[RMDB]
Source information:
Structure probing data (2A3 and DMS) for a 177-nucleotide construct. For DMS, 1,467 sequencing reads were counted. Values cover nucleotides 27 to 126. It was measured as part of the RMDB library OK1LIB. Reactivities are rounded to 0.1 and cut off at 0 and 3.
RNA sequence: GGGAACGACUCGAGUAGAGUCGAAAACUGUACGAUCUUUUAUCCCUCCGGGGUCAAUAAAUUGGUACCAGACUUCUCUGGGAGGAUAAAAACACUGAUCUGGCACAUCAGCUAACCCCGCAUGUAAGGCAUUACCAUAGUUCGCUAUGGUAAUGCCAAAAGAAACAACAACAACAAC
Reactivity to 2A3 in 0.01 (KOAc 150mM, MgCl2 10mM, bicine 150mM(pH8.5), 24C), signal-to-noise 3, nucleotides 027 to 126: c030u020g040u080a010c030g020a040u070c000u000u050u000u020a020u010c000c010c000u000c000c000g060g010g000g000u060c040a070a070u150a210a180a090u210u140g070g020u060a070c090c030a020g050a060c010u100u030c070u030c020u060g000g090g000a010g010g040a020u040a030a030a010a010a010c110a030c090u030g010a040u000c030u030g020g050c060a060c010a140u070c040a010g030c010u000a040a090c010c010c000c000g050c060a100u060g090u210a060a120
Reactivity to DMS in 0.01 (KOAc 150mM, MgCl2 10mM, bicine 150mM(pH8.5), 24C), signal-to-noise 1, nucleotides 027 to 126: c000u040g000u010a060c110g040a030u000c000u000u000u000u000a040u000c000c000c020u000c020c010g010g000g000g000u000c260a150a020u050a020a080a050u090u060g000g060u010a110c190c010a040g000a070c140u000u000c050u070c000u070g000g000g000a000g010g000a000u030a010a000a000a010a010c130a090c060u000g010a050u000c000u040g020g000c130a060c290a060u000c080a000g020c080u010a050a120c020c000c000c000g030c150a100u000g000u050a040a060